[RMDB]
RNA sequence: GGGAACGACUCGAGUAGAGUCGAAAAGCUGGCCGUCUGCAGCGCAGGCCGAUCGUACGCUAUGGCCUGAUCGUACGGCGCAGGAUCGUACGGCCACUGCAUCAGUACGAUCGGCCAGUACCGAUGGUCCCAUACAAUAAUUCGUUAUUGUAUGGGAAAAAGAAACAACAACAACAAC
Reactivity to DMS in 0.01 (KOAc 150mM, MgCl2 10mM, bicine 150mM(pH8.5), 24C), signal-to-noise 9, nucleotides 027 to 126: g010c030u000g010g020c020c040g010u000c050u000g010c040a040g010c040g010c180a080g010g010c010c010g000a010u000c010g010u000a010c020g010c080u000a090u000g000g010c010c160u010g000a060u000c080g010u000a040c020g010g010c050g020c160a140g010g010a070u000c010g010u010a040c080g010g010c020c010a020c070u000g010c020a110u010c180a250g010u000a000c010g000a010u000c000g010g000c000c000a010g010u000a160c020c030g000a160u000g010g000
Reactivity to 2A3 in 0.01 (KOAc 150mM, MgCl2 10mM, bicine 150mM(pH8.5), 24C), signal-to-noise 9, nucleotides 027 to 126: g020c020u010g010g030c010c020g050u050c040u070g020c020a030g010c060g040c110a070g000g000c000c000g000a010u010c000g000u000a010c040g000c040u040a050u060g010g000c010c030u070g070a110u130c040g020u030a020c010g020g020c070g030c100a070g100g170a220u020c010g010u030a020c020g010g000c000c000a010c030u030g000c000a100u120c060a050g010u000a000c000g000a000u000c000g000g000c000c000a000g000u010a010c000c010g030a030u050g020g030

The record gives the reactivity of an RNA of 177 nucleotides to DMS and 2A3. Values cover nucleotides 27 to 126. For DMS, 61,670 sequencing reads were counted. The RNA was probed in 150 mM KOAc, 10 mM MgCl2 and 150 mM bicine (pH 8.5) at 24 C. 2A3 adducts were read by reverse transcription with SuperScript II with manganese.